[RMDB]
RNA sequence: GGGAACGACUCGAGUAGAGUCGAAAAAGACAAAGAAGGAAUAGAAGUGAAGGAAGAAGGCUGGACUGUGAACCAAUGACACUGAGUUGCCCGCGCCACCGUGGAGGGCAUAGGGGACAGGUCAAAAGUUCCAGUGAAGUCCUGGGAGGUGGUGUGACCACUGACUACCAUUCGUGGUAGUCAGUGGAAAAGAAACAACAACAACAAC
Reactivity to 2A3 in 0.01 (KOAc 150mM, MgCl2 10mM, bicine 150mM(pH8.5), 24C), signal-to-noise 2, nucleotides 027 to 156: a000g010a010c050a020a070a010g100a010a010g030g020a020a060u030a120g090a090a020g070u050g050a040a010g050g000a060a030g030a010a000g020g020c020u030g010g030a000c030u020g100u130g170a000a000c020c000a020a170u050g020a000c060a080c170u040g050a080g230u040u090g240c000c010c040g040c010g020c020c030a160c000c060g090u230g040g060a180g050g040g000c000a020u200a070g000g000g000g010a000c000a000g060g000u000c000a000a010a000a030g020u030u000c000c000a030g000u030g030a020a030g060u040c010c020u020g000g030g000a070g000g020u080g000g000u100g030u120g000a010